[RMDB]
RNA sequence: GGGAACGACUCGAGUAGAGUCGAAAAGAUAUGGAGCCAGGGAGAUGGUGUUCGGAAACGAACACACAUCGAAGAACUGGUCUCCUAAGUCAAAAUCACGAUAUCACCUUCGGGUGAUAUCGUGAAAUCCUGUGUGAUAGUUCGCUAUCACACAGGAAAAAGAAACAACAACAACAAC
Reactivity to 2A3 in 0.01 (KOAc 150mM, MgCl2 10mM, bicine 150mM(pH8.5), 24C), signal-to-noise 1, nucleotides 027 to 126: g000a000u030a000u050g000g000a000g000c010c000a000g020g000g030a080g010a010u020g040g050u020g000u000u010c000g000g000a050a030a030c010g010a000a010c020a000c020a030c000a010u010c000g050a140a040g020a000a000c000u010g000g160u120c030u000c000c000u010a050a020g040u010c020a050a020a030a270u050c010a000c000g010a000u000a010u010c030a020c000c000u060u120c290g020g000g000u000g000a000u010a000u010c010g000u000g000a000a000a000
Reactivity to DMS in 0.01 (KOAc 150mM, MgCl2 10mM, bicine 150mM(pH8.5), 24C), signal-to-noise 2, nucleotides 027 to 126: g000a040u000a220u010g000g000a050g000c040c000a000g010g000g000a100g010a020u000g000g000u000g000u000u010c000g010g000a040a030a140c000g010a000a020c000a000c000a100c010a000u000c010g020a140a120g000a150a160c020u000g000g000u010c020u000c000c000u020a020a120g000u000c020a070a070a120a130u000c020a000c000g000a000u020a000u010c010a000c000c000u000u000c170g020g020g000u000g000a010u000a000u000c000g010u000g000a000a050a090

Chemical mapping of a 177-nucleotide RNA with 2A3 and DMS. DMS adducts were read by reverse transcription with MarathonRT. The RNA was probed in 150 mM KOAc, 10 mM MgCl2 and 150 mM bicine (pH 8.5) at 24 C. Reactivities are given for positions 27 through 126. The DMS profile rests on 2,041 reads.